The data come from the RNA Mapping Database (RMDB), library OK3TST. The record gives the reactivity of an RNA of 207 nucleotides to 2A3 and DMS. Reactivities are given for positions 27 through 156. The RNA was probed in 150 mM KOAc, 10 mM MgCl2 and 150 mM bicine (pH 8.5) at 24 C.
RNA sequence: GGGAACGACUCGAGUAGAGUCGAAAAUCUGACAUUAACACUAACCUUGACGGUGUACUGCAAAGUACAAAUGAGCUAAUUGCUUUGUAUGCACUUGAAGGUAAUGAUUAUGAUUUCUCUCUAACUGUUACCACAUUGGCCAAUAGCUCACAGAUCAACUAUUCACCUAGUUCGCUAGGUGAAUAGUAAAAGAAACAACAACAACAAC
Reactivity to 2A3 in 0.01 (KOAc 150mM, MgCl2 10mM, bicine 150mM(pH8.5), 24C), signal-to-noise 9, nucleotides 027 to 156: u020c020u020g030a010c020a060u100u090a170a030c080a040c210u100a120a100c010c010u050u060g080a090c140g020g000u010g010u010a030c130u010g000c010a000a020a010g010u040a070c080a050a130a100u130g030a030g040c040u060a110a060u090u040g010c000u010u000u000g000u010a010u040g000c000a000c010u040u140g060a010a000g010g000u020a010a030u050g090a030u020u080a040u190g050a040u010u080u000c050u010c000u000c020u040a080a090c050u100g060u140u100a060c020c020a070c070a210u090u130g070g000c040c030a080a100u060a060g000c000u020c030a050c050a020g110a100u190c030a040
Reactivity to DMS in 0.01 (KOAc 150mM, MgCl2 10mM, bicine 150mM(pH8.5), 24C), signal-to-noise 4, nucleotides 027 to 156: u000c030u000g040a180c050a100u000u020a070a120c040a110c030u030a180a110c000c010u000u000g000a300c270g010g050u000g000u000a020c080u010g040c060a020a020a020g000u000a050c140a050a080a110u000g000a100g030c090u010a070a190u000u000g020c000u010u000u010g010u000a090u000g000c010a010c030u000u000g000a180a060g030g020u000a040a030u000g010a110u000u000a050u000g010a130u000u000u000c060u000c070u010c020u000a060a060c020u000g020u000u010a030c020c010a110c150a120u000u000g000g020c020c030a040a060u000a040g000c010u010c030a110c080a070g000a090u010c040a150